[RMDB]
RNA sequence: GGGAACGACUCGAGUAGAGUCGAAAAGCGAAAUUUGCCAUGAGACCGUAACUUUCGUAGUCAUUGAUAAAGGGGCAGGUCUCGCUCUUUUGUCAUUGCGGUUGCCUAGAGGCAUGGUCGUUUACCGAAAAGAGCUCAUUCUUCGGAAUGAGCUCAACAAUGCCUAAUGCUUCGGCAUUAGGCAUUGAAAAGAAACAACAACAACAAC
Reactivity to DMS in 0.01 (KOAc 150mM, MgCl2 10mM, bicine 150mM(pH8.5), 24C), signal-to-noise 2, nucleotides 027 to 156: g040c010g000a020a010a070u000u000u010g030c020c020a110u010g000a160g020a030c010c030g000u010a090a100c120u000u010u020c110g030u000a090g030u020c050a060u000u000g010a020u000a020a000a040g000g020g010g010c010a120g050g010u020c090u000c080g020c010u000c010u000u010u000u000g030u000c000a090u000u000g010c040g000g050u000u000g010c030c080u000a110g010a200g000g000c010a060u010g020g020u000c020g050u000u000u000a120c040c000g010a070a060a080a090g000a020g020c000u000c000a000u010u000c020u000u010c300g040g000a020a000u000g020a020g000c000u000c000a000a060
Reactivity to 2A3 in 0.01 (KOAc 150mM, MgCl2 10mM, bicine 150mM(pH8.5), 24C), signal-to-noise 3, nucleotides 027 to 156: g000c000g030a060a070a090u030u050u030g050c020c020a050u120g060a040g020a090c000c020g020u030a020a050c010u050u150u180c080g020u060a030g090u070c090a120u050u040g000a010u010a010a010a020g020g000g000g000c010a040g050g190u040c120u070c090g010c000u000c000u000u000u000u000g000u000c010a020u000u080g010c000g030g000u020u050g020c000c040u150a100g010a130g080g000c000a000u030g060g000u020c000g010u020u050u060a200c020c000g020a070a020a050a030g000a010g010c000u000c000a000u000u010c000u030u050c140g020g010a000a000u000g000a020g000c010u000c000a000a000